Chemical mapping of a 207-nucleotide RNA with DMS and 2A3.
[RMDB]
RNA sequence: GGGAACGACUCGAGUAGAGUCGAAAAGGAACCGGAUGCCAUCACGUUGUUGCAGUACCAGAUGGCAUCUUAAAUCCGAUCUGCAAAUAAGCAUGUAGAAAGCUGAUGUGGGCUUUAGCUGGACGGGGGAAUACAGGCAACUUCGGUUGCCUGUAAACAGAGUAAGUACUUUCGAGUACUUACUCUGAAAAGAAACAACAACAACAAC
Reactivity to DMS in 0.01 (KOAc 150mM, MgCl2 10mM, bicine 150mM(pH8.5), 24C), signal-to-noise 3, nucleotides 027 to 156: g000g020a080a090c070c140g020g000a030u020g010c010c000a040u000c020a230c180g020u000u000g010u000u020g020c010a100g020u000a080c030c040a200g010a030u000g020g000c000a000u000c020u010u000a040a080a130u000c030c020g000a150u010c060u010g030c020a060a060a120u000a090a120g020c010a120u000g010u000a090g010a090a060a130g010c020u000g000a130u000g020u040g010g020g000c050u000u000u000a060g010c060u000g030g000a100c020g000g000g010g030g030a130a240u000a030c010a000g010g000c000a000a020c000u000u010c240g000g020u000u010g020c000c000u000g000u000a010a030a150
Reactivity to 2A3 in 0.01 (KOAc 150mM, MgCl2 10mM, bicine 150mM(pH8.5), 24C), signal-to-noise 2, nucleotides 027 to 156: g020g010a020a070c030c040g000g010a000u000g000c010c000a010u010c010a010c140g040u050u070g020u030u050g010c050a050g060u100a100c050c030a020g000a000u000g000g000c010a000u000c000u000u000a000a000a000u000c000c010g010a050u030c010u030g030c040a030a070a110u210a190a070g020c020a050u090g020u140a030g140a100a060a010g000c030u020g040a090u090g050u100g030g010g000c000u040u080u090a050g000c040u030g050g000a010c020g010g000g010g010g090a020a010u030a010c000a000g000g000c000a010a000c000u040u020c150g060g000u000u000g000c000c000u000g010u000a000a000a000
The data come from the RNA Mapping Database (RMDB), library M2RFPK.